An RNA of 177 nucleotides, treated with 2A3 and DMS and read out base by base. The data come from the RNA Mapping Database (RMDB), library M2PK50. Values cover nucleotides 27 to 126. DMS adducts were read by reverse transcription with MarathonRT. For 2A3, 4,720 sequencing reads were counted. The RNA was probed in 150 mM KOAc, 10 mM MgCl2 and 150 mM bicine (pH 8.5) at 24 C.

RNA sequence: GGGAACGACUCGAGUAGAGUCGAAAACAUGACGAGUUCGCUCGUCAUGAAAGAAAGAAAGAUUGUCUGAAGCGCCAGACUAGCGCAAAAGAAAGAAAGAAAAAAGCAAACUCUUCGGAGUUUGCAACAUCUCUUUAAUCUUCGGAUUAAAGAGAUGAAAAGAAACAACAACAACAAC
Reactivity to 2A3 in 0.01 (KOAc 150mM, MgCl2 10mM, bicine 150mM(pH8.5), 24C), signal-to-noise 4, nucleotides 027 to 126: c010a000u000g010a000c000g010a000g000u050u060c130g080c070u000c000g000u000c000a000u000g000a000a000a010g060a030a060a000g110a020a150a000g090a130u110u140g080u080c010u010g070a170a040g000c010g020c040c030a060g050a260c090u100a030g010c000g000c010a100a030a000a030g060a030a050a010g070a010a130a020g100a040a170a010a020a000a000g010c000a000a000a000c000u000c000u040u070c150g080g000a000g000u010u000u020g000c000a000a000
Reactivity to DMS in 0.01 (KOAc 150mM, MgCl2 10mM, bicine 150mM(pH8.5), 24C), signal-to-noise 4, nucleotides 027 to 126: c010a010u000g000a000c000g010a020g020u000u020c200g050c000u000c010g000u000c010a000u000g000a060a080a110g000a100a120a120g010a140a110a090g000a130u010u000g010u000c000u000g000a230a220g000c030g030c020c080a120g010a130c180u000a090g020c020g000c010a030a050a120a030g000a020a080a100g000a080a090a080g010a010a060a050a080a080a120g000c000a000a000a000c000u000c000u010u020c180g030g010a020g010u000u000u000g010c000a050a050